This 207-nucleotide RNA was probed chemically with DMS and 2A3. The RNA was probed in 150 mM KOAc, 10 mM MgCl2 and 150 mM bicine (pH 8.5) at 24 C. For DMS, 1,473 sequencing reads were counted.
[RMDB]
RNA sequence: GGGAACGACUCGAGUAGAGUCGAAAAUGUGCGAAAUAGGUUUGCCGUCAUCUAUACGGACCAUCUGUUCGAGGAAAACCUCUCGUUCACCGGAUCCAUCUAUUGGCAUAUAAAGAACAAAGUCUUUCCCAUGGAAAAGGGAUACGUCGACGAACUGCUAACGGAUGCGGUUCGCCGCAUCCGUUAGAAAAGAAACAACAACAACAAC
Reactivity to DMS in 0.01 (KOAc 150mM, MgCl2 10mM, bicine 150mM(pH8.5), 24C), signal-to-noise 1, nucleotides 027 to 156: u000g030u000g000c010g000a070a060a120u000a200g000g010u040u000u000g020c020c080g000u020c140a060u000c040u000a090u030a040c090g010g000a120c040c080a070u000c050u000g000u030u000c040g000a050g050g000a100a130a110a220c070c080u010c010u000c070g030u000u000c020a030c120c060g020g020a070u030c000c050a140u000c090u020a090u010u020g030g130c070a040u000a040u000a150a070a110g040a050a090c040a040a040a110g000u000c000u000u000u000c000c000c000a180u010g010g000a020a140a050a150g000g020g000a050u000a020c110g000u000c040g050a070c040g020a010a020c040u000g030
Reactivity to 2A3 in 0.01 (KOAc 150mM, MgCl2 10mM, bicine 150mM(pH8.5), 24C), signal-to-noise 2, nucleotides 027 to 156: u030g020u000g020c040g130a050a000a040u040a070g050g030u130u120u190g070c040c010g060u050c020a290u010c200u140a160u060a150c010g010g000a040c010c010a070u020c050u040g010u000u010c030g000a000g020g040a010a140a080a220c020c020u020c000u000c040g030u000u040c030a020c030c040g000g020a030u040c040c020a040u000c010u030a080u060u130g030g000c000a000u030a000u040a080a080a040g110a040a030c060a150a150a010g010u010c000u010u020u010c000c000c010a030u060g070g050a010a050a070a070g050g050g020a020u090a090c120g000u010c040g100a060c000g010a030a000c010u000g000